RNA sequence: GGGAACGACUCGAGUAGAGUCGAAAAACUUGGCGACUUGCAUGCCUGCCCGAUUCCGGGCCACGGCAUCACGCCCAUUGUGACGGCUUCAAGCGAUGUGUAGCAGAAUAGCGUUCGCGCUAUUCUGGAUUUCCCUUACGUUCGCGUAAGGGAAAUCAAAAGAAACAACAACAACAAC
Reactivity to 2A3 in 0.01 (KOAc 150mM, MgCl2 10mM, bicine 150mM(pH8.5), 24C), signal-to-noise 1, nucleotides 027 to 126: a000c040u060u060g040g000c040g060a250c140u080u140g040c080a000u010g020c020c010u020g000c000c000c000g110a260u300u180c190c020g000g000g000c020c020a090c070g020g000c010a010u000c000a020c030g020c030c030c010a110u060u150g130u030g080a040c040g040g040c000u080u050c160a110a030g020c010g040a070u040g090u050g070u210a050g080c000a010g000a000a000u000a010g020c010g020u010u040c220g000c000g000c070u000a000u000u000c000u000g000
Reactivity to DMS in 0.01 (KOAc 150mM, MgCl2 10mM, bicine 150mM(pH8.5), 24C), signal-to-noise 1, nucleotides 027 to 126: a050c010u000u000g000g000c030g060a130c100u000u000g040c150a000u000g010c010c000u010g010c000c000c010g010a250u000u000c190c040g020g000g000c090c090a000c300g020g020c000a000u000c030a090c080g000c040c000c090a050u010u000g030u010g030a250c030g000g000c040u010u000c040a060a160g010c010g000a050u030g030u010g000u030a140g030c000a010g000a000a000u000a000g000c000g010u000u010c230g000c000g020c000u000a010u000u000c000u000g020
This 177-nucleotide RNA was probed chemically with 2A3 and DMS. Conditions: 150 mM KOAc, 10 mM MgCl2 and 150 mM bicine (pH 8.5), 24 C. For DMS, 1,111 sequencing reads were counted. DMS (dimethyl sulfate) methylates the pairing face of unpaired adenines and cytosines.